[RMDB]
RNA sequence: GGGAACGACUCGAGUAGAGUCGAAAACGCUGGGCAACUAAGCUUGCACAGGGAGCUUCCUGAAGCGCGCACGGGAAGCGAAGAACUGUAUAAGUAUGUUGCCUGUGCUGAAGCGCGCACGGCAACCGAAAGGUGCGAAGAUCCUGAUUCGUCAGGAGGAAGUGAGUAACUUCGGUUACUCACUUCCAAAAGAAACAACAACAACAAC
Reactivity to 2A3 in 0.01 (KOAc 150mM, MgCl2 10mM, bicine 150mM(pH8.5), 24C), signal-to-noise 1, nucleotides 027 to 156: c010g010c010u010g010g000g010c030a000a010c010u060a150a080g070c000u000u010g120c030a000c000a010g020g030g010a010g020c000u000u010c010c000u020g040a140a050g000c020g000c000g010c000a010c020g000g000g000a010a000g000c070g060a150a000g000a000a020c000u000g000u010a000u000a020a000g010u000a020u220g000u010u000g000c000c000u000g000u000g000c000u020g000a100a030g000c000g000c000g000c000a010c020g000g000c010a010a000c000c000g050a100a040a020g000g000u030g010c000g010a030a050g060a090u020c000c010u030g000a040u030u150c250g080u000c080a010g010g010a010

Overview: Chemical mapping of a 207-nucleotide RNA with 2A3. The reactions ran in a buffer of 150 mM KOAc, 10 mM MgCl2 and 150 mM bicine (pH 8.5), at 24 C. Source: RMDB library RNAMAK, as collected in RNAgym.